[RMDB]
RNA sequence: GGGAACGACUCGAGUAGAGUCGAAAAUUCGUCGGAAGAGGUUUGAAAAACCACGUAGAUGAACCUUGGGUCGAUUGGUCAUUCUUAGAAGAUACCUGGACCUCGAUGUUUGCUUUUCAAACUGCUGUACUUACACCGGGUUCGCCCGGUGUAAGUAAAAAGAAACAACAACAACAAC
Reactivity to DMS in 0.01 (KOAc 150mM, MgCl2 10mM, bicine 150mM(pH8.5), 24C), signal-to-noise 2, nucleotides 027 to 126: u010u000c010g030u010c090g010g020a110a160g000a090g010g020u000u020u000g000a090a030a040a080a080c020c200a090c160g000u030a120g000a050u030g000a040a070c050c070u010u010g000g000g000u000c030g020a170u000u000g010g010u010c110a070u000u000c050u000u000a200g020a080a150g010a060u000a040c010c030u000g000g000a070c010c020u000c120g020a060u000g010u000u010u010g000c150u000u000u000u010c050a020a040a070c060u010g000c050u000g030
About this RNA: This 177-nucleotide RNA was probed chemically with DMS. DMS adducts were read by reverse transcription with MarathonRT. Conditions: 150 mM KOAc, 10 mM MgCl2 and 150 mM bicine (pH 8.5), 24 C. Source: RMDB library OK2TST, as collected in RNAgym.